Structure probing data (DMS and 2A3) for a 177-nucleotide construct. For DMS the reverse transcriptase was MarathonRT. For 2A3 the reverse transcriptase was SuperScript II with manganese. Values cover nucleotides 27 to 126. It was measured as part of the RMDB library TTRINS. Values are in units of 0.01, from 0 to 300, in steps of 10. For DMS, 6,633 sequencing reads were counted.
[RMDB]
RNA sequence: GGGAACGACUCGAGUAGAGUCGAAAAGAUAUGGACGAGGAGAGCCUUGGAUUUAUGAGCCACUUACUUGACAUUCGGAAACGAAUGUCAAGUAAUGCUCAUUGUCAGGCUCACCUCGUCCUAAGUCCUUAGCAUUUAUCUUCGGAUAAAUGCUAAGAAAAGAAACAACAACAACAAC
Reactivity to DMS in 0.01 (KOAc 150mM, MgCl2 10mM, bicine 150mM(pH8.5), 24C), signal-to-noise 3, nucleotides 027 to 126: g000a100u000a300u000g000g010a040c000g000a010g010g010a130g020a020g020c000c000u010u000g020g000a030u000u010u010a000u000g000a020g010c010c030a060c030u000u000a010c000u000u000g010a010c010a020u000u000c000g010g000a140a130a240c010g000a030a010u000g000u000c000a000a000g000u000a020a000u000g000c000u010c010a010u000u000g010u000c010a030g010g000c000u000c000a030c000c000u000c000g000u010c000c000u000a010a070g010u000c050
Reactivity to 2A3 in 0.01 (KOAc 150mM, MgCl2 10mM, bicine 150mM(pH8.5), 24C), signal-to-noise 3, nucleotides 027 to 126: g070a020u170a040u270g000g000a000c010g010a010g020g040a080g010a010g030c000c040u150u300g260g000a110u300u300u200a010u050g010a000g020c010c010a150c080u000u010a010c000u000u000g010a000c000a010u000u000c010g050g000a090a090a020c000g000a000a010u000g000u000c000a000a000g000u000a000a000u020g000c000u010c000a000u000u000g000u010c000a000g000g000c010u000c000a000c000c000u000c000g000u000c000c000u000a000a010g010u000c000